[RMDB]
RNA sequence: GGGAACGACUCGAGUAGAGUCGAAAAGAUUACGUGUCCGUGAGGAAUCGAAACGACGCACGAGAUUCCAAGGUCUCUGUAGUACGUCGUCUCGUGACGUCUCUCUAGUCACGUUCGACAUACGAAACGAUACUACUAGGUUCGCCUAGUAGUAUCGAAAAGAAACAACAACAACAAC
Reactivity to 2A3 in 0.01 (KOAc 150mM, MgCl2 10mM, bicine 150mM(pH8.5), 24C), signal-to-noise 3, nucleotides 027 to 126: g040a070u060u070a010c010g000u010g010u000c040c040g000u020g020a010g030g040a020a070u050c010g020a020a030a020c020g010a000c000g020c020a000c020g010a010g010a020u080u000c090c080a030a030g130g000u000c000u000c020u060g020u040a030g030u030a030c010g000u000c000g020u000c000u000c020g000u010g050a020c020g120u000c000u000c000u000c000u110a080g000u000c000a000c000g000u000u030c030g020a020c010a060u150a040c060g020a050a050a000
Reactivity to DMS in 0.01 (KOAc 150mM, MgCl2 10mM, bicine 150mM(pH8.5), 24C), signal-to-noise 2, nucleotides 027 to 126: g000a090u040u020a050c050g050u010g000u000c040c120g000u010g000a070g000g000a030a040u020c050g010a000a050a030c010g010a020c080g030c050a050c030g010a240g010a020u000u020c160c120a200a130g000g010u000c020u000c010u040g010u030a090g020u020a000c030g000u020c020g010u000c030u000c000g000u000g000a300c300g000u080c010u000c140u000c210u020a300g000u000c000a030c030g000u030u010c040g000a080c020a040u030a030c070g000a000a140a100
An RNA of 177 nucleotides, treated with 2A3 and DMS and read out base by base.
For 2A3, 4,499 sequencing reads were counted.
The DMS profile rests on 2,484 reads.
Conditions: 150 mM KOAc, 10 mM MgCl2 and 150 mM bicine (pH 8.5), 24 C.
Reactivities are given for positions 27 through 126.
DMS adducts were read by reverse transcription with MarathonRT.
High DMS reactivity at an A or C suggests that its Watson-Crick edge is free.